[RMDB]
RNA sequence: GGGAACGACUCGAGUAGAGUCGAAAAGAUAUGGACUGUGACAUGCGAACUGCGUCGGAAACGACGUUGUUCGCAACAGCACAGGUCCUAAGUCAACGCGCGAUUGUACUUCGGUACAAUCGCGCAAUCAAGGGGUUUACUUCGGUAAACCCCUUGAAAAAGAAACAACAACAACAAC
Reactivity to DMS in 0.01 (KOAc 150mM, MgCl2 10mM, bicine 150mM(pH8.5), 24C), signal-to-noise 1, nucleotides 027 to 126: g000a030u010a300u020g010g020a200c000u020g000u000g000a070c080a240u000g000c020g000a000a010c000u000g010c000g000u020c000g020g000a070a130a160c000g030a000c000g010u000u020g020u000u000c010g000c020a000a000c200a120g000c030a010c000a010g000g010u000c000c010u010a050a070g010u020c110a220a150c210g010c000g010c000g060a010u000u000g010u000a020c000u000u010c140g010g000u000a000c010a020a000u010c000g000c000g050c020a000a030